[RMDB]
RNA sequence: GGGAACGACUCGAGUAGAGUCGAAAAUCGUGAGAUGUGGUGCCUCACGCGCUCGAGGCGUCCGUGGUCAGAGAGACCACUGACGCAAAAACUCGAGCGCAAAUAAAAUGCAUUACAUAUAGAAUAAGGAUUUAGUAAAUUUCGAUUUACUAAAUCCAAAAGAAACAACAACAACAAC
Reactivity to DMS in 0.01 (KOAc 150mM, MgCl2 10mM, bicine 150mM(pH8.5), 24C), signal-to-noise 3, nucleotides 027 to 126: u050c050g030u030g000a030g010a140u010g020u000g010g000u000g020c000c050u020c030a030c050g000c020g010c000u010c000g020a030g010g030c000g030u000c030c030g010u000g020g030u010c020a200g010a210g010a120g010a010c000c000a000c010u000g020a000c000g000c060a010a020a050a060a300c010u000c000g000a000g010c000g000c000a030a040a050u040a080a030a030a060u020g000c010a010u010u010a030c030a150u030a090u050a070g000a110a090u040a110a180
Reactivity to 2A3 in 0.01 (KOAc 150mM, MgCl2 10mM, bicine 150mM(pH8.5), 24C), signal-to-noise 5, nucleotides 027 to 126: u170c030g000u020g010a030g000a060u300g020u000g000g030u000g000c000c000u010c000a010c050g000c000g000c000u000c000g000a000g010g000c000g000u000c010c000g000u000g000g000u000c050a050g080a060g010a030g000a300c000c000a000c000u000g000a000c000g000c000a090a110a010a020a030c000u000c000g000a000g000c000g000c000a000a000a000u090a000a030a000a020u060g010c000a000u010u030a010c020a010u190a020u090a090g160a110a090u190a180a080
The record gives the reactivity of an RNA of 177 nucleotides to DMS and 2A3. 2A3 adducts were read by reverse transcription with SuperScript II with manganese.